An RNA of 177 nucleotides, treated with DMS and read out base by base. Source: RMDB library OK2TRN, as collected in RNAgym.

RNA sequence: GGGAACGACUCGAGUAGAGUCGAAAAUGGCCACUCACCAGAUGGUUUGUAACUUGGGCAGAUUAUCGAGCAGGGUUUAAUUCUCCUCGUUUGUGGAACUGGCCCAGUCACUGUGGGACUGCGACAAGACCUUCACCUGUUUCGACAGGUGAAGGUCAAAAGAAACAACAACAACAAC
Reactivity to DMS in 0.01 (KOAc 150mM, MgCl2 10mM, bicine 150mM(pH8.5), 24C), signal-to-noise 1, nucleotides 027 to 126: u020g000g030c000c000a050c030u010c020a130c070c050a160g010a080u000g040g020u000u000u000g040u030a070a060c090u000u020g010g000g000c010a020g020a080u000u020a070u000c050g000a070g020c110a100g020g010g020u000u000u010a110a140u000u020c090u000c020c020u000c040g060u000u010u000g030u010g030g080a060a090c120u000g040g010c000c000c030a040g000u000c050a010c060u000g010u000g020g000g010a040c030u020g010c040g000a070c120a100a100